[RMDB]
RNA sequence: GGGAACGACUCGAGUAGAGUCGAAAAGUGGCAACGAGUGCGCCACGGUACUCGAAGGGUAGGAGCUUCGGAUUCUACCGACCGAAGAAAGGAUUGCGAAUAGUGUUGAACGUAAUCCGCAACACAAGGCAUGCAUCGCGUUCGCGUGAUGCAUGCCAAAAGAAACAACAACAACAAC
Reactivity to DMS in 0.01 (KOAc 150mM, MgCl2 10mM, bicine 150mM(pH8.5), 24C), signal-to-noise 2, nucleotides 027 to 126: g060u000g050g000c050a130a120c070g000a020g010u010g000c140g010c030c030a000c070g000g000u000a020c070u000c000g000a170a270g010g000g010u000a010g000g000a070g000c000u000u020c170g000g000a040u000u000c000u000a080c000c000g010a090c270c010g000a080a060g000a120a060a050g000g000a000u040u000g000c000g030a110a090u000a070g030u000g000u000u030g000a020a220c070g000u000a000a000u000c000c080g000c050a000a000c290a070c300a210a060
Reactivity to 2A3 in 0.01 (KOAc 150mM, MgCl2 10mM, bicine 150mM(pH8.5), 24C), signal-to-noise 2, nucleotides 027 to 126: g020u000g020g000c000a030a010c120g100a060g130u170g040c090g010c050c030a020c040g020g000u080a110c050u020c000g040a060a000g210g040g000u110a020g010g020a020g020c000u010u050c040g160g180a110u030u010c030u000a070c010c010g000a020c000c010g010a060a030g000a170a120a000g030g000a020u000u000g010c000g000a010a110u090a100g060u140g050u070u100g020a010a010c000g000u020a000a000u000c000c000g000c010a020a060c040a000c060a110a030
The record gives the reactivity of an RNA of 177 nucleotides to DMS and 2A3. Conditions: 150 mM KOAc, 10 mM MgCl2 and 150 mM bicine (pH 8.5), 24 C. For DMS the reverse transcriptase was MarathonRT. 2A3 adducts were read by reverse transcription with SuperScript II with manganese. Reactivities are given for positions 27 through 126.